Chemical mapping of a 177-nucleotide RNA with DMS and 2A3. It was measured as part of the RMDB library TTRINS. Reactivities are given for positions 27 through 126. DMS adducts were read by reverse transcription with MarathonRT. 2A3 adducts were read by reverse transcription with SuperScript II with manganese. The RNA was probed in 150 mM KOAc, 10 mM MgCl2 and 150 mM bicine (pH 8.5) at 24 C.
RNA sequence: GGGAACGACUCGAGUAGAGUCGAAAAGAUAUGGAUGUCCCUCGACAUGUGUAUAACUUUGAUGACCAGCUUCGGAAACGAAGCUGCAAGAAGCAUAAGACACAACAGCGAGGGACAUCCUAAGUCACUCAUACAUAGAGUUCGCUCUAUGUAUGAGAAAAGAAACAACAACAACAAC
Reactivity to DMS in 0.01 (KOAc 150mM, MgCl2 10mM, bicine 150mM(pH8.5), 24C), signal-to-noise 9, nucleotides 027 to 126: g020a050u010a300u020g000g000a010u000g020u000c000c000c000u000c000g010a070c160a250u000g010u000g010u000a020u000a140a080c010u000u000u000g000a090u010g000a150c300c000a000g000c000u000u000c000g010g010a160a120a260c000g010a010a000g000c010u000g000c020a050a060g000a010a010g010c170a100u000a110a170g000a020c000a000c010a040a100c270a170g010c030g000a020g000g010g000a010c000a000u000c000c010u000a010a080g010u000c050a260
Reactivity to 2A3 in 0.01 (KOAc 150mM, MgCl2 10mM, bicine 150mM(pH8.5), 24C), signal-to-noise 6, nucleotides 027 to 126: g020a020u080a040u200g000g000a010u000g000u000c010c090c000u000c010g300a300c110a230u170g010u000g020u030a030u050a280a060c040u070u090u080g290a300u200g030a150c020c030a010g000c000u010u000c000g000g020a050a070a070c010g000a000a010g040c000u000g000c000a040a090g030a020a000g000c090a070u060a270a140g080a030c010a000c010a120a190c080a090g140c000g000a000g000g010g000a000c000a000u000c000c000u000a000a000g010u000c000a010
For DMS, 11,645 sequencing reads were counted.